[RMDB]
RNA sequence: GGGAACGACUCGAGUAGAGUCGAAAACUACACAUGAGGCAUUUGUUUAUUUCAAUGAUUUCAAUCUCUUUGAGUUCAACAUACAGUGAUGCUUUUCAAGGUAAUGAAUUAGUUCAUUGAUUAGUUUAUCUAUUAUAAGACAGUAAAUUGAUGUAAAGGAUAAUGCGCUAUUCGUAGCGCAUUAUCCAAAAGAAACAACAACAACAAC
Reactivity to 2A3 in 0.01 (KOAc 150mM, MgCl2 10mM, bicine 150mM(pH8.5), 24C), signal-to-noise 1, nucleotides 027 to 156: c020u180a000c100a000c020a050u080g070a080g090g000c050a060u000u020u170g060u020u140u090a060u020u160u000c100a100a040u030g020a020u120u030u000c000a110a140u020c000u000c000u160u020u000g000a000g030u030u110c020a050a100c050a080u280a060c030a030g020u100g080a050u030g080c010u030u010u100u160c000a040a090g020g000u020a090a040u060g030a000a110u230u000a020g050u050u000c000a000u000u050g100a080u100u030a000g000u000u150u160a060u060c000u100a000u230u000a000u000a160a170g020a020c000a020g080u100a030a130a290u050u030g030a020u170g060u220a250a040a000
Chemical mapping of a 207-nucleotide RNA with 2A3.
Values are in units of 0.01, from 0 to 300, in steps of 10.
The data come from the RNA Mapping Database (RMDB), library OK3TST.